[RMDB]
RNA sequence: GGGAACGACUCGAGUAGAGUCGAAAAGUACCCUUGUUCGCAAGGGUACAAAGACAGACUUCACUGUCAUAAAGAAGCUAACAUCUCAGUUACAAUAAGAGAAAAGCACCUACUUCGGUAGGUGCAAGACUCUGCACGAGUUCGCUCGUGCAGAGUCAAAAGAAACAACAACAACAAC
Reactivity to 2A3 in 0.01 (KOAc 150mM, MgCl2 10mM, bicine 150mM(pH8.5), 24C), signal-to-noise 1, nucleotides 027 to 126: g000u000a000c020c020c010u000u000g070u040u050c150g010c130a000a020g000g000g010u000a010c020a020a000a000g010a010c000a000g010a040c070u090u070c230a060c090u010g010u070c010a010u240a000a180a050g080a080a030g040c060u040a000a030c000a130u010c020u000c040a090g000u040u050a090c040a110a110u170a230a030g080a000g010a040a050a000a020g000c020a040c000c000u000a010c020u010u040c150g090g000u010a010g000g010u000g000c000a010a000
Source: RMDB library M2PK50, as collected in RNAgym. An RNA of 177 nucleotides, treated with 2A3 and read out base by base. For 2A3 the reverse transcriptase was SuperScript II with manganese. The RNA was probed in 150 mM KOAc, 10 mM MgCl2 and 150 mM bicine (pH 8.5) at 24 C.